[RMDB]
RNA sequence: GGGAACGACUCGAGUAGAGUCGAAAAGGUGAGAUGUGAGGGGUGGACCUAGGUGACUUGAUGGACAGGGAGGCAGUGACGGAGGCAGGACCAUGAGGCUGGUUUCCGCAGCAUUGAGCCUGAGGUGUUGAUGGGACCUCCCUGUGGAGAUGAGCAGAAAAGUCGUUAUAUUCGUAUAACGACUUUUAAAAGAAACAACAACAACAAC
Reactivity to DMS in 0.01 (KOAc 150mM, MgCl2 10mM, bicine 150mM(pH8.5), 24C), signal-to-noise 1, nucleotides 027 to 156: g060g050u000g010a100g020a050u000g000u000g030a160g040g020g040g010u010g010g000a060c000c020u000a120g030g080u030g010a110c070u000u000g020a160u010g000g010a140c060a060g090g000g000a060g030g020c040a150g000u000g050a080c050g040g020a080g020g000c020a080g000g010a090c030c010a120u010g030a090g030g010c010u010g030g010u000u000u010c030c040g000c000a060g040c020a120u000u000g000a080g000c000c010u010g010a130g010g020u000g040u000u010g020a160u000g020g020g010a100c010c020u000c000c010c010u000g030u010g000g000a080g020a060u000g000a080g030c040a160g000
Reactivity to 2A3 in 0.01 (KOAc 150mM, MgCl2 10mM, bicine 150mM(pH8.5), 24C), signal-to-noise 1, nucleotides 027 to 156: g010g020u040g010a100g030a100u070g020u100g070a070g000g050g000g000u060g000g050a010c030c020u050a080g000g030u060g030a100c040u000u050g050a010u040g080g030a010c020a020g000g010g000a000g000g060c030a060g020u020g030a040c080g050g000a010g030g000c000a010g050g040a020c010c060a040u180g040a070g130g000c040u030g030g000u000u060u010c010c040g030c040a010g020c020a020u000u110g050a050g060c000c000u020g010a040g000g040u040g060u050u040g030a110u080g000g020g040a070c000c000u030c010c000c050u020g040u040g000g000a060g010a020u030g010a000g050c040a000g200
An RNA of 207 nucleotides, treated with DMS and 2A3 and read out base by base. For DMS, 3,782 sequencing reads were counted. The 2A3 profile rests on 978 reads. Values cover nucleotides 27 to 156.